[RMDB]
RNA sequence: GGGAACGACUCGAGUAGAGUCGAAAAUCAACAAGUGAGUAUGCACUCACUUCAUUCUCAAGUUGGAUUCUUCCCCCAAUCCAAUUUCCUUUCUGGUCAAUCAAUGAAGUUCCAAUCAAAUCAACCAGCGUUAGUAUUAUUUCGAUAAUACUAACGCAAAAGAAACAACAACAACAAC
Reactivity to DMS in 0.01 (KOAc 150mM, MgCl2 10mM, bicine 150mM(pH8.5), 24C), signal-to-noise 7, nucleotides 027 to 126: u010c170a070a090c170a030a020g020u000g000a020g010u000a130u010g010c240a110c010u000c000a010c000u000u000c100a110u000u000c030u000c040a070a080g010u000u000g000g000a020u000u000c110u010u010c020c000c000c020c120a060a020u000c000c010a010a030u000u000u010c080c050u000u000u000c060u000g010g010u000c080a080a070u000c110a060a080u000g020a080a100g010u000u000c030c030a090a090u010c090a050a110a070u010c120a070a110c120c080a120
Reactivity to 2A3 in 0.01 (KOAc 150mM, MgCl2 10mM, bicine 150mM(pH8.5), 24C), signal-to-noise 4, nucleotides 027 to 126: u100c010a010a100c020a020a020g010u010g000a000g010u050a100u300g130c110a020c030u010c000a000c000u030u010c000a100u070u010c030u010c050a040a030g020u020u000g010g020a030u140u020c040u190u130c040c000c010c000c020a010a000u000c010c000a000a010u020u030u070c030c000u070u140u030c030u020g000g020u030c020a010a040u040c010a020a080u120g020a060a020g030u060u000c030c000a020a030u070c040a030a140a080u070c020a030a050c030c020a020
The record gives the reactivity of an RNA of 177 nucleotides to DMS and 2A3.
For DMS, 6,807 sequencing reads were counted.
For 2A3, 6,160 sequencing reads were counted.